RNA sequence: GGGAACGACUCGAGUAGAGUCGAAAACUCAUCGAGUUCGCUCGAUGAGAAAAUAAAAACCGUCUUUCCCGACGUUAAAGGGAUGAAAAAUUAACGUCAAAAAAAGAGAGCUGUUCGCAGCUCUCAACGUAAAUAGUUUGUUCGCAAACUAUUUACGAAAAGAAACAACAACAACAAC
Reactivity to DMS in 0.01 (KOAc 150mM, MgCl2 10mM, bicine 150mM(pH8.5), 24C), signal-to-noise 3, nucleotides 027 to 126: c000u000c010a000u000c000g000a010g020u000u010c190g000c000u000c010g000a020u000g000a020g000a010a050a030a040u000a110a060a070a080a160c090c010g010u000c040u000u000u000c010c000c000g000a020c000g000u000u030a000a030a040g000g010g010a030u000g000a020a100a100a090a080u000u010a030a050c150g010u040c110a000a000a110a040a060a090a120g000a030g000a010g010c010u010g000u000u020c160g020c020a020g000c000u000c000u000c000a010a050
Reactivity to 2A3 in 0.01 (KOAc 150mM, MgCl2 10mM, bicine 150mM(pH8.5), 24C), signal-to-noise 3, nucleotides 027 to 126: c000u000c000a010u000c010g000a000g010u070u070c090g080c070u000c000g000a000u000g000a010g000a020a110a000a010u040a010a010a010a010a010c030c000g020u000c010u020u030u010c000c000c000g000a000c010g010u020u000a010a000a010g040g010g020a050u120g050a080a080a050a040a010u130u090a080a040c040g160u120c140a070a120a020a020a010a050a020g010a000g000a000g000c030u020g060u090u090c210g020c170a000g000c020u000c000u010c000a000a000

Conditions: 150 mM KOAc, 10 mM MgCl2 and 150 mM bicine (pH 8.5), 24 C. An RNA of 177 nucleotides, treated with DMS and 2A3 and read out base by base. For DMS the reverse transcriptase was MarathonRT. For 2A3, 3,345 sequencing reads were counted. Values cover nucleotides 27 to 126.